[RMDB]
RNA sequence: GGGAACGACUCGAGUAGAGUCGAAAAAAUAUAUGGGACAGUAGAGGUCGCAAGCCUAUACUGUGCGGUGAACAUUCUAGUAGGCCGCCUCAACAGAGGACGUCUAUGAAUGGUGAGGGAGCCAACCCAUCUGAGGUGUCUUCGGACACCUCAGAUGAAAAGAAACAACAACAACAAC
Reactivity to DMS in 0.01 (KOAc 150mM, MgCl2 10mM, bicine 150mM(pH8.5), 24C), signal-to-noise 2, nucleotides 027 to 126: a040a150u090a080u010a120u010g040g000g000a090c020a000g040u000a000g000a020g000g000u010c100g020c300a170a260g000c000c000u000a040u000a000c010u000g000u000g000c110g020g010u000g010a140a060c020a000u000u010c040u110a170g020u010a020g000g000c020c140g020c000c000u000c000a160a090c300a080g000a010g000g000a080c070g010u020c000u030a000u000g000a040a020u000g040g000u040g000a160g030g010g000a280g000c060c040a190a160c070c020
Reactivity to 2A3 in 0.01 (KOAc 150mM, MgCl2 10mM, bicine 150mM(pH8.5), 24C), signal-to-noise 2, nucleotides 027 to 126: a000a000u290a010u020a060u250g060g000g060a000c020a000g000u020a000g000a000g040g000u220c000g010c300a010a010g000c020c000u030a010u000a020c000u000g010u020g030c080g000g060u080g030a000a120c000a000u000u000c020u040a070g050u020a000g070g000c070c080g020c040c000u030c010a110a220c040a090g000a000g030g000a040c000g010u020c000u000a000u090g000a010a070u000g010g050u110g040a080g030g100g000a000g010c000c010a030a040c000c000

Chemical mapping of a 177-nucleotide RNA with DMS and 2A3. Conditions: 150 mM KOAc, 10 mM MgCl2 and 150 mM bicine (pH 8.5), 24 C. Reactivities are given for positions 27 through 126. For 2A3 the reverse transcriptase was SuperScript II with manganese. Source: RMDB library RFM100, as collected in RNAgym.